[RMDB]
RNA sequence: GGGAACGACUCGAGUAGAGUCGAAAAUAGCGUUAAGGUCCUUCGCGGGCUGAUCCGGGUUGAAGACAUUGUCAGGUGGGGAGUUUGGCUGGGGCGGCACAUCUGUUAAACCAUAACGCAGGUGUCCUUCUGUGAUGGAAUUCGUUCCAUCACAGAAAAAAGAAACAACAACAACAAC
Reactivity to 2A3 in 0.01 (KOAc 150mM, MgCl2 10mM, bicine 150mM(pH8.5), 24C), signal-to-noise 1, nucleotides 027 to 126: u030a010g050c050g030u050u070a180a010g060g010u050c000c040u080u050c100g000c130g060g000g020c050u080g010a040u080c000c010g060g010g030u020u050g080a150a020g040a040c050a150u090u250g010u140c020a040g000g010u080g080g020g050g000a020g030u090u070u120g010g010c020u030g000g000g000g040c000g000g000c060a000c000a010u040c000u000g000u020u070a080a040a030c040c000a040u040a080a020c040g000c060a010g000g010u000g010u030c010c000
Reactivity to DMS in 0.01 (KOAc 150mM, MgCl2 10mM, bicine 150mM(pH8.5), 24C), signal-to-noise 3, nucleotides 027 to 126: u040a100g030c030g020u010u020a080a120g010g020u020c050c010u000u050c130g020c100g000g000g000c020u000g000a060u000c050c050g000g010g020u020u000g020a100a060g000a030c110a120u020u010g000u020c060a100g010g020u000g010g000g000g000a080g000u000u040u030g010g000c030u000g000g010g000g010c130g030g010c070a020c010a030u000c000u020g020u010u010a120a130a120c100c100a090u020a050a130c150g010c000a040g000g030u010g010u010c070c050
An RNA of 177 nucleotides, treated with 2A3 and DMS and read out base by base. The RNA was probed in 150 mM KOAc, 10 mM MgCl2 and 150 mM bicine (pH 8.5) at 24 C. The 2A3 profile rests on 1,470 reads.